[RMDB]
This 207-nucleotide RNA was probed chemically with 2A3. For 2A3 the reverse transcriptase was SuperScript II with manganese.

RNA sequence: GGGAACGACUCGAGUAGAGUCGAAAACGUCAGUCUCCACCUGUGUCUGAAAAUCACAAGUAGCAUGGCAAAUGCUUCCAUGUUUAGAAAAAUAUCCAAUUUGACCAUCCUAUCAGUUCCAGAUGAACCUCUGUUUCCUGCCAAAGUGGAACUUCAGUCGUAAGAUCGCAUUCGUGCGAUCUUACGAAAAAGAAACAACAACAACAAC
Reactivity to 2A3 in 0.01 (KOAc 150mM, MgCl2 10mM, bicine 150mM(pH8.5), 24C), signal-to-noise 1, nucleotides 027 to 156: c060g030u030c020a040g020u000c050u050c120c040a010c020c020u040g000u050g080u130c000u100g090a060a000a040a050u080c030a090c030a060a090g000u050a010g020c030a010u020g020g000c020a000a090a110u100g020c020u060u030c020c020a050u060g000u090u080u070a140g090a060a030a040a040a050u140a020u020c030c100a060a100u020u010u130g030a070c030c010a030u040c000c000u110a150u130c030a030g050u090u000c000c040a050g000a110u110g040a060a120c000c020u010c010u020g040u040u000u000c010c060u080g030c090c050a060a040a000g070u050g000g060a020a060c000u070u080c040a070g060